[RMDB]
RNA sequence: GGGAACGACUCGAGUAGAGUCGAAAAUGCGGUCUGCGUCACGGGGCUCCUCGUCCUGGCCUCUGUGUUCCGGGCACGGUUUCCCUGCUUUUACGCCACGGCGAGCUCUUAUGCCGGGGUGAACUCCACGGCCGAGGUGCGCGGGGGUGUAGCCGUGCCCCCGCUAUUAGUUCGCUAAUAGCGGGGGAAAAGAAACAACAACAACAAC
Reactivity to 2A3 in 0.01 (KOAc 150mM, MgCl2 10mM, bicine 150mM(pH8.5), 24C), signal-to-noise 2, nucleotides 027 to 156: u170g000c030g020g010u070c020u090g040c020g030u060c010a010c020g020g000g120g050c000u020c080c000u130c050g070u050c030c030u010g010g000c000c020u040c080u110g000u000g070u150u000c040c010g000g050g000c070a060c050g010g000u000u090u100c000c000c000u010g040c000u030u130u150u130a070c080g010c010c000a030c050g040g000c010g020a060g050c020u040c070u190u130a130u280g020c000c000g000g000g010g000u030g040a070a040c030u000c030c030a060c120g010g000c000c000g080a040g000g050u060g060c110g000c060g010g000g030g010g000u060g040u020a000g000c010c010g000u000g010